[RMDB]
RNA sequence: GGGAACGACUCGAGUAGAGUCGAAAAACGCGGAGUACGCUCCGCGACAACACUUCUUUCGACCCGCUAACCGAGACCUAUGGGUCGUUAAAUUACGUCUCUAUCUUACUCACAUAACAUCGAACAAAAAACGUGGUUCGGUUCGCCGAACCACGAAGUUUAUCUCUAGGUUCGCCUAGAGAUAAACAAAAGAAACAACAACAACAAC
Reactivity to DMS in 0.01 (KOAc 150mM, MgCl2 10mM, bicine 150mM(pH8.5), 24C), signal-to-noise 2, nucleotides 027 to 156: a070c030g010c020g000g020a030g050u000a080c270g000c040u000c000c000g070c010g000a060c050a070a090c080a110c070u000u010c040u020u000u020c000g020a050c010c010c000g040c110u000a130a120c060c060g000a080g010a090c000c030u000a090u000g000g020g040u000c000g020u000u000a010a140a070u010u010a060c020g000u000c020u000c000u030a130u000c050u000u000a060c050u010c030a110c070a080u010a060a090c050a100u000c060g000a070a140c100a000a040a010a090a110a130c000g020u000g010g010u000u000c000g010g010u000u000c300g050c020c000g000a020a010c000c020a000c010g020a000a020
Reactivity to 2A3 in 0.01 (KOAc 150mM, MgCl2 10mM, bicine 150mM(pH8.5), 24C), signal-to-noise 5, nucleotides 027 to 156: a000c000g000c000g010g010a010g000u030a020c160g030c070u000c000c010g040c020g020a010c020a070a020c030a020c070u130u130c020u060u290u120c010g020a000c000c010c000g050c160u170a030a000c040c020g010a020g030a020c020c010u030a070u190g010g000g000u010c010g040u010u020a000a000a030u130u050a010c020g010u000c010u000c000u010a130u110c040u090u140a110c050u110c080a080c030a160u200a230a070c030a120u160c120g140a130a080c100a090a150a030a050a010a040c010g000u000g000g000u000u000c000g000g040u040u030c120g010c010c000g000a000a000c020c020a000c010g000a000a000
Chemical mapping of a 207-nucleotide RNA with DMS and 2A3. The RNA was probed in 150 mM KOAc, 10 mM MgCl2 and 150 mM bicine (pH 8.5) at 24 C. For DMS the reverse transcriptase was MarathonRT.